RNA sequence: GGGAACGACUCGAGUAGAGUCGAAAAUCACUCUUGCAGCAAGACAACCCAGAACUCGGUUUAGCCCAACGGUGGAUAGGGUUUCACUGUUACUACGGAGAGUACAGAACCGCGAAGACUAGGAAAGCCUUCGAAUGUAGUUCGCUACAUUCGAAGGAAAAGAAACAACAACAACAAC
Reactivity to DMS in 0.01 (KOAc 150mM, MgCl2 10mM, bicine 150mM(pH8.5), 24C), signal-to-noise 3, nucleotides 027 to 126: u000c070a070c100u000c040u000u020g020c040a040g020c060a060a090g030a090c140a070a120c020c010c010a150g000a130a130c070u000c040g010g000u000u000u000a130g000c030c040c060a070a070c090g010g000u000g000g000a090u010a120g010g000g020u000u000u000c020a090c020u000g010u000u000a070c060u000a060c090g010g010a110g030a070g030u000a050c110a110g010a100a100c040c020g000c070g020a100a050g010a050c060u000a100g000g000a110a100a080g010
Reactivity to 2A3 in 0.01 (KOAc 150mM, MgCl2 10mM, bicine 150mM(pH8.5), 24C), signal-to-noise 2, nucleotides 027 to 126: u050c000a010c040u040c000u010u070g050c040a040g000c030a000a080g070a090c020a050a090c010c000c000a020g030a060a010c020u020c080g010g090u030u070u140a030g030c000c010c030a060a040c050g000g060u050g000g050a060u090a130g120g060g000u000u040u060c070a050c010u000g040u080u080a030c020u000a030c020g100g020a090g000a010g080u020a020c020a030g080a020a050c000c000g060c020g080a040a000g010a010c050u060a020g110g030a120a070a000g050
An RNA of 177 nucleotides, treated with DMS and 2A3 and read out base by base.
2A3 adducts were read by reverse transcription with SuperScript II with manganese.
The DMS profile rests on 1,982 reads.